An RNA of 207 nucleotides, treated with 2A3 and read out base by base. Conditions: 150 mM KOAc, 10 mM MgCl2 and 150 mM bicine (pH 8.5), 24 C.
RNA sequence: GGGAACGACUCGAGUAGAGUCGAAAAUCAAUACAGAACUACAAGUGCCUAGAUGCAUUAAGCUGCCCAGGCACGUUGAACUAUGAUAAAAUCCGUGAAGGGAUUGACCUUCUACUUGAUAACUGUCAUGAUGCAAUCAUAGAAUGUUAUGAAGGUGGAGAAGCUCCGUAUUCGUACGGAGCUUCUCAAAAGAAACAACAACAACAAC
Reactivity to 2A3 in 0.01 (KOAc 150mM, MgCl2 10mM, bicine 150mM(pH8.5), 24C), signal-to-noise 1, nucleotides 027 to 156: u060c030a040a000u190a040c120a000g170a250a030c010u060a120c090a190a050g010u000g010c000c010u070a120g000a160u130g030c030a090u040u300a040a010g000c030u000g000c030c030c000a000g000g000c010a010c030g000u000u060g000a010a000c000u030a070u090g040a060u090a230a050a030a000u040c090c170g100u040g170a000a000g110g000g070a060u200u300g000a040c000c000u000u000c010u000a000c030u100u070g160a000u000a150a000c000u090g000u030c000a000u170g040a000u160g300c150a080a080u000c000a000u040a000g020a100a000u010g000u040u010a000u000g090a000a000g000g000u130g000

2A3 adducts were read by reverse transcription with SuperScript II with manganese.